[RMDB]
RNA sequence: GGGAACGACUCGAGUAGAGUCGAAAAGAAAGCGUCAUUCGCCGAAAGAGAAGAUAAUGACGCAUUAGGUUACGUGUGCAACCUAAUCAGCGCACGACAAGAAAUCUCAUUCGCAGAAAUAAGAAAACGGGCCAUAAUUAUUCGUAAUUAUGGCCCGAAAAGAAACAACAACAACAAC
Reactivity to DMS in 0.01 (KOAc 150mM, MgCl2 10mM, bicine 150mM(pH8.5), 24C), signal-to-noise 2, nucleotides 027 to 126: g000a150a070a120g010c000g000u000c000a020u000u000c100g060c210c000g000a150a210a180g030a100g000a140a110g000a180u000a040a000u000g000a050c000g000c000a030u000u060a020g000g000u000u000a010c030g060u010g000u000g000c010a000a060c000c000u020a070a000u000c300a130g070c010g000c020a000c000g050a210c160a200a000g000a010a130a090u030c070u000c100a130u000u000c080g040c230a170g000a030a040a020u010a010a000g000a080a050a070a170
Reactivity to 2A3 in 0.01 (KOAc 150mM, MgCl2 10mM, bicine 150mM(pH8.5), 24C), signal-to-noise 3, nucleotides 027 to 126: g070a010a050a000g010c000g010u010c020a000u010u050c030g000c040c020g120a060a150a030g080a030g050a070a050g020a060u090a070a020u080g010a030c000g010c010a040u000u060a000g010g010u010u010a050c020g020u020g000u020g020c040a020a060c010c000u150a080a140u080c100a050g000c000g000c000a000c020g040a010c020a070a060g100a050a050a040u040c050u000c000a070u250u090c060g000c060a010g090a050a030a050u210a100a040g080a030a080a030a010